[RMDB]
RNA sequence: GGGAACGACUCGAGUAGAGUCGAAAAUGGAGCACGGUGAUGUGAUCAAAACUCACUGCAGCUUUGAACUCCUGAGCUCCAGUGAUUCUCCUGCCUCCGUCUUCUGAGGAGCUGGGACCACAGGCACGAUCUAUGGGGUGUUCGCACCCCAUAGAUCAAAAGAAACAACAACAACAAC
Reactivity to DMS in 0.01 (KOAc 150mM, MgCl2 10mM, bicine 150mM(pH8.5), 24C), signal-to-noise 2, nucleotides 027 to 126: u000g010g010a040g030c020a130c020g030g040u010g010a060u020g030u020g000a150u000c120a040a060a060a050c030u000c010a120c200u010g000c150a050g020c000u010u000u000g000a040a120c060u000c010c010u000g020a050g020c010u000c010c010a040g000u010g010a110u010u010c040u000c040c100u000g040c190c020u000c040c140g000u010c090u000u020c120u020g000a110g000g010a030g020c040u000g000g020g010a070c070c120a070c100a040g000g010c130a070c150
Reactivity to 2A3 in 0.01 (KOAc 150mM, MgCl2 10mM, bicine 150mM(pH8.5), 24C), signal-to-noise 2, nucleotides 027 to 126: u010g010g000a000g070c020a000c060g010g030u140g020a140u160g060u070g030a080u140c040a010a050a020a010c020u020c030a240c160u140g050c110a010g000c000u010u020u020g020a000a040c010u000c010c000u010g010a000g020c010u020c000c030a000g000u020g090a140u110u020c040u000c070c030u040g070c000c000u060c020c000g170u110c030u240u050c080u140g060a090g000g020a010g000c010u030g020g030g020a030c000c030a020c020a020g100g000c090a020c140
This 177-nucleotide RNA was probed chemically with DMS and 2A3.
Conditions: 150 mM KOAc, 10 mM MgCl2 and 150 mM bicine (pH 8.5), 24 C.
The DMS profile rests on 1,387 reads.
2A3 adducts were read by reverse transcription with SuperScript II with manganese.